The data come from the RNA Mapping Database (RMDB), library OK2TRN.
The record gives the reactivity of an RNA of 177 nucleotides to DMS.
For DMS the reverse transcriptase was MarathonRT.
Conditions: 150 mM KOAc, 10 mM MgCl2 and 150 mM bicine (pH 8.5), 24 C.

RNA sequence: GGGAACGACUCGAGUAGAGUCGAAAACUCUUUGCCCCAUAGUACAGCGGGGUCUGCUCUGAUUGUAGGGGCUUCCCACAUCCCCCAGGAUGGCUGCCCUCUGCUGUGGCAUCACUGUGUAACAAUGUCUCCUCCAAGUUUUCGAACUUGGAGGAGAAAAAGAAACAACAACAACAAC
Reactivity to DMS in 0.01 (KOAc 150mM, MgCl2 10mM, bicine 150mM(pH8.5), 24C), signal-to-noise 1, nucleotides 027 to 126: c170u010c070u000u000u000g010c030c050c120c020a180u000a060g020u000a050c020a010g020c030g030g030g000g010u000c150u000g000c000u010c060u000g010a290u020u020g000u020a080g010g010g000g010c090u000u000c010c020c040a100c210a160u030c010c000c000c000c010a090g030g010a080u000g070g040c030u000g010c060c010c060u000c030u000g050c060u020g010u000g050g020c040a060u000c060a050c010u010g000u010g020u020a090a090c100a070a070u020g000